[RMDB]
RNA sequence: GGGAACGACUCGAGUAGAGUCGAAAAUAAUAUGCAUAUCGAGUUCCCAUGUAUUUUCGUAGCCCUGCGGCUCUAACAUUACAGCUUAGUAAGAAUGCUACCUAACGAUAGCUAGCCGCAGGAUUAAUGUUUUAAUAGCUUUCGAGCUAUUAAAACAAAAAGAAACAACAACAACAAC
Reactivity to DMS in 0.01 (KOAc 150mM, MgCl2 10mM, bicine 150mM(pH8.5), 24C), signal-to-noise 5, nucleotides 027 to 126: u000a090a080u000a080u010g000c090a070u000a090u010c070g000a150g000u000u000c000c010c000a140u010g010u000a040u000u000u000u000c060g010u000a080g010c100c000c000u000g010c000g020g000c000u000c090u010a030a070c110a070u000u000a070c120a160g010c180u010u000a070g010u010a080a050g020a090a050u010g000c010u000a040c050c030u010a110a150c180g000a040u000a010g010c030u010a050g010c000c000g000c010a010g010g000a020u000u010a040a140
Reactivity to 2A3 in 0.01 (KOAc 150mM, MgCl2 10mM, bicine 150mM(pH8.5), 24C), signal-to-noise 2, nucleotides 027 to 126: u040a030a020u130a030u120g040c020a020u080a070u250c060g020a070g070u000u000c000c030c000a030u090g010u030a120u020u150u000u090c040g020u030a000g000c000c000c020u010g000c000g000g000c000u020c020u060a100a040c020a080u050u210a080c050a040g060c060u000u060a030g000u090a080a060g030a150a010u090g030c000u010a000c030c010u060a160a040c100g080a090u000a010g040c030u020a000g000c000c010g000c010a000g010g000a000u000u000a000a000